[RMDB]
RNA sequence: GGGAACGACUCGAGUAGAGUCGAAAAGAUAUGGACCGUGUAGACAUGCAGGUUCGGAAACGAGUCUGCAACAGCUACCGGUCCUAAGUCAAAGUCUCGAACUCGAGUUCGCUCGAGUUCGAGACAACUUGCGAAAUAAGUUCGCUUAUUUCGCAAGAAAAGAAACAACAACAACAAC
Reactivity to 2A3 in 0.01 (KOAc 150mM, MgCl2 10mM, bicine 150mM(pH8.5), 24C), signal-to-noise 2, nucleotides 027 to 126: g010a010u040a030u110g000g010a000c010c030g090u130g020u240a030g080a240c070a140u040g000c000a010g000g010u020u010c010g000g020a040a050a010c000g000a000g020u020c000u000g010c020a030a020c030a020g030c000u010a000c000c000g000g000u000c000c000u000a010a000g000u010c030a000a000a210g000u000c000u000c010g020a010a000c000u000c010g010a010g030u050u060c140g060c030u000c000g000a000g010u000u010c010g000a000g000a000c000a000a000
Reactivity to DMS in 0.01 (KOAc 150mM, MgCl2 10mM, bicine 150mM(pH8.5), 24C), signal-to-noise 3, nucleotides 027 to 126: g020a030u000a280u010g000g010a020c000c010g000u000g020u000a010g000a050c090a240u000g000c000a000g000g000u000u000c000g000g010a040a030a170c010g010a010g000u000c000u010g010c000a020a030c300a140g000c010u010a010c010c010g000g000u000c000c000u000a000a070g000u000c020a120a130a150g000u000c000u000c000g000a010a010c000u000c000g000a010g020u000u000c240g010c000u000c000g000a020g000u010u000c000g000a000g010a000c000a010a050
Structure probing data (2A3 and DMS) for a 177-nucleotide construct. It was measured as part of the RMDB library TTRDEL. The DMS profile rests on 4,816 reads. Conditions: 150 mM KOAc, 10 mM MgCl2 and 150 mM bicine (pH 8.5), 24 C. DMS adducts were read by reverse transcription with MarathonRT. For 2A3 the reverse transcriptase was SuperScript II with manganese.